Chemical mapping of a 177-nucleotide RNA with 2A3. Conditions: 150 mM KOAc, 10 mM MgCl2 and 150 mM bicine (pH 8.5), 24 C. 2A3 adducts were read by reverse transcription with SuperScript II with manganese.

RNA sequence: GGGAACGACUCGAGUAGAGUCGAAAAAUUUUUUUUCAAGAUCUCCUUUUUCUAAUGACUACUUUGAUUUGGUGUCCAAUCCCAAAUAUCCAUAACUGUUUAAGGAAUCUGAAGCAGUUCGAAAGCGGCACCGCAUAUAUUUCGAUAUAUGCGGUGCAAAAGAAACAACAACAACAAC
Reactivity to 2A3 in 0.01 (KOAc 150mM, MgCl2 10mM, bicine 150mM(pH8.5), 24C), signal-to-noise 1, nucleotides 027 to 126: a000u140u020u000u000u000u000u030u010c040a090a030g030a050u000c040u010c050c040u010u240u000u000u000c040u200a040a040u080g030a010c040u000a010c080u170u110u050g100a120u020u080u130g040g000u050g070u090c000c020a000a000u000c020c010c000a020a110a020u120a130u090c030c020a040u070a270a070c040u080g150u240u020u000a000a000g050g000a060a060u010c000u030g000a030a000g000c020a020g010u070u000c040g080a250a040a070g110c020g010